[RMDB]
RNA sequence: GGGAACGACUCGAGUAGAGUCGAAAAAAGAGUCUCACAAGGUGGAGGCUGGUAAUGCUGUGAAUUCAACAAUAUCGAGUAGUGACAGCAGGGCACCGUCGAAACGAAUUAGUGUUCGAGUCAUCGCCCAUGCACGCUUCUUCGGAAGCGUGCAUGGAAAAGAAACAACAACAACAAC
Reactivity to DMS in 0.01 (KOAc 150mM, MgCl2 10mM, bicine 150mM(pH8.5), 24C), signal-to-noise 2, nucleotides 027 to 126: a120a120g000a040g010u000c000u000c000a000c090a040a120g000g020u000g000g000a180g020g010c050u000g010g020u000a140a050u000g020c000u000g000u000g000a190a070u000u050c010a080a120c210a120a140u010a220u060c080g060a060g070u000a030g000u000g000a080c040a020g000c020a010g000g060g020c050a080c100c130g010u000c000g040a190a110a020c050g030a150a080u030u050a050g000u100g020u000u000c000g010a170g000u000c000a210u000c160g010c030

The record gives the reactivity of an RNA of 177 nucleotides to DMS.